[RMDB]
RNA sequence: GGGAACGACUCGAGUAGAGUCGAAAAAAGAGUGUGUUCGCACACUCUUAAAAGGACCUCGUGGCGCAAUGGUAGCGCGUCUGACUCCAGAUCAGAAGGUUGCGUGUUCGAAUCACGUCGGGGUCACCAGUGGGGAGGCUAUGUUCGCAUAGCCUAAUGUAAUACUCUGGUUCGCCAGAGUAUUACAAAAAGAAACAACAACAACAAC
Reactivity to 2A3 in 0.01 (KOAc 150mM, MgCl2 10mM, bicine 150mM(pH8.5), 24C), signal-to-noise 2, nucleotides 027 to 156: a000a000g000a010g000u020g000u000g030u060u080c140g040c090a000c000a000c000u000c000u000u000a000a010a000a000g090g000a010c000c010u010c000g000u000g030g000c020g000c020a020a020u130g160g100u120a050g010c000g000c000g000u000c000u000g000a000c020u090c210c200a070g020a300u010c020a000g000a020a000g040g000u080u000g010c000g000u010g010u000u000c000g000a000a000u000c000a000c010g010u000c000g000g010g000g020u000c020a020c010c010a040g080u300g030g030g000g000a020g000g000c010u010a000u000g050u060u080c240g010c090a000u000a000g000c000c000u000a010a010
Reactivity to DMS in 0.01 (KOAc 150mM, MgCl2 10mM, bicine 150mM(pH8.5), 24C), signal-to-noise 3, nucleotides 027 to 156: a050a030g000a040g010u000g040u010g010u000u000c300g040c020a020c000a020c000u000c000u010u000a020a050a120a100g030g020a060c010c010u000c000g030u000g010g000c000g000c020a050a040u010g060g000u010a050g020c050g000c010g020u000c000u000g010a080c000u000c130c270a250g030a110u020c050a070g020a070a130g000g000u010u020g010c000g000u000g010u010u000c010g020a300a120u010c030a010c020g020u000c020g000g000g020g000u000c000a060c040c050a100g000u010g000g000g030g010a040g020g000c010u000a000u000g020u000u000c240g060c010a020u000a030g020c000c000u010a010a060